[RMDB]
RNA sequence: GGGAACGACUCGAGUAGAGUCGAAAAGUAUCUUAGUGAACUGAAGGAAUCAGGUGGGCGGAGUCCCAGACCAGAAUUGCAGAAAUUUGAAUAUCCAGAUGGAGUGAAAGACACUGAAUCAAUUGAGAGAUUGGCAGAGGAGUUCUUCAAUAGAUCACACCAAGGAAGUAUUCGUACUUCCUUGGUGAAAAGAAACAACAACAACAAC
Reactivity to 2A3 in 0.01 (KOAc 150mM, MgCl2 10mM, bicine 150mM(pH8.5), 24C), signal-to-noise 2, nucleotides 027 to 156: g060u030a080u110c040u130u170a070g010u040g090a070a030c070u020g070a050a000g040g020a040a040u130c040a020g090g000u020g000g010g040c060g050g030a020g030u090c030c000c000a000g040a010c010c020a050g030a080a020u060u060g000c030a010g070a070a090a000u100u080u080g030a080a010u100a060u100c000c000a070g020a070u120g020g000a030g020u030g000a070a020a000g050a000c010a000c030u050g020a000a130u090c040a000a140u090u090g020a050g010a000g030a110u000u130g010g040c020a020g000a040g020g010a010g030u000u010c000u070u060c010a010a080u070a080g070a050u130c050a010
Reactivity to DMS in 0.01 (KOAc 150mM, MgCl2 10mM, bicine 150mM(pH8.5), 24C), signal-to-noise 1, nucleotides 027 to 156: g010u020a050u000c020u020u030a130g000u000g030a060a140c040u000g020a140a080g010g000a080a130u010c050a090g000g010u000g010g010g000c060g010g020a140g020u010c020c000c020a060g000a080c070c020a100g010a070a080u000u010g000c080a100g020a020a070a200u000u020u020g020a050a050u000a080u000c010c020a080g000a110u000g010g010a080g020u000g000a080a060a050g020a080c070a070c050u010g000a020a090u000c010a040a110u000u010g010a110g010a120g000a040u000u000g020g060c070a130g010a070g030g010a070g000u000u000c060u010u000c040a040a100u000a070g010a120u010c020a180